This 177-nucleotide RNA was probed chemically with 2A3 and DMS. The reactions ran in a buffer of 150 mM KOAc, 10 mM MgCl2 and 150 mM bicine (pH 8.5), at 24 C.
[RMDB]
RNA sequence: GGGAACGACUCGAGUAGAGUCGAAAACAACGGUAGGUCAGUAUGCCCCGAAUGGACCGGGCAACACGCGGGCUACAAUGGCUCUGACAGUGGGAUGCAACGCCGAGAGGCGACGCUAAUCUCCAAAAACUUCAUGUACAUUCGUGUACAUGAAGUUAAAAGAAACAACAACAACAAC
Reactivity to 2A3 in 0.01 (KOAc 150mM, MgCl2 10mM, bicine 150mM(pH8.5), 24C), signal-to-noise 9, nucleotides 027 to 126: c050a020a030c010g090g040u100a050g030g100u040c020a010g030u050a070u180g020c000c000c000c010g070a040a130u120g040g040a030c050c000g000g020g000c050a060a040c010a010c080g050c040g010g000g000c000u030a020c050a060a180u110g020g000c010u020c040u130g030a030c020a060g040u180g040g010g000a010u030g000c010a040a010c020g000c000c000g040a050g010a020g060g000c020g010a010c050g000c010u060a070a030u000c020u000c020c000a000a060a020
Reactivity to DMS in 0.01 (KOAc 150mM, MgCl2 10mM, bicine 150mM(pH8.5), 24C), signal-to-noise 7, nucleotides 027 to 126: c060a120a120c110g000g010u010a070g000g010u000c040a070g020u010a050u030g010c040c010c030c040g000a110a130u020g020g010a090c070c060g000g000g010c060a080a080c110a080c090g010c060g010g000g010c020u010a070c090a090a090u010g010g000c030u010c030u000g010a070c110a080g010u010g010g000g000a030u000g000c030a050a260c020g010c010c010g010a220g000a150g000g010c000g000a020c290g000c030u020a060a040u010c000u000c000c050a040a050a050